[RMDB]
RNA sequence: GGGAACGACUCGAGUAGAGUCGAAAAUGAGCGACUUACACGACUGGUGUCGGAAGCGUCGGUGACCCCGGUGUAUUGAGCACCACAUUAGACGUGAGGUCCGCCGAUCACAGAUAGUGCCGUUAAGCGCGGUAAGAAGGUUCGCCUUCUUACCGCGAAAAGAAACAACAACAACAAC
Reactivity to 2A3 in 0.01 (KOAc 150mM, MgCl2 10mM, bicine 150mM(pH8.5), 24C), signal-to-noise 3, nucleotides 027 to 126: u170g010a090g000c010g000a020c010u030u130a110c100a010c020g090a040c070u010g050g000u040g000u090c040g010g030a040a020g000c000g000u000c000g000g080u040g040a030c000c000c050c010g010g000u050g030u020a250u120u290g050a070g000c060a020c030c000a040c000a050u020u040a080g000a010c030g010u040g020a000g070g050u020c090c010g000c000c000g020a010u050c030a050c020a050g070a100u110a070g000u020g060c000c020g090u040u070a100a000g090
Reactivity to DMS in 0.01 (KOAc 150mM, MgCl2 10mM, bicine 150mM(pH8.5), 24C), signal-to-noise 1, nucleotides 027 to 126: u000g000a230g000c000g000a090c000u000u000a070c050a070c000g000a120c030u000g000g040u000g000u040c070g000g000a070a260g010c000g000u000c010g010g000u090g000a210c300c000c000c050g000g000u000g000u000a210u100u000g010a150g000c070a080c040c000a110c010a030u060u000a050g080a110c010g020u000g000a070g000g020u000c000c020g120c000c000g010a020u000c010a160c150a100g000a040u000a100g020u020g000c050c000g000u000u000a060a300g000
Source information: Chemical mapping of a 177-nucleotide RNA with 2A3 and DMS. For DMS the reverse transcriptase was MarathonRT. Source: RMDB library OK1LIB, as collected in RNAgym. For 2A3 the reverse transcriptase was SuperScript II with manganese. For DMS, 1,251 sequencing reads were counted.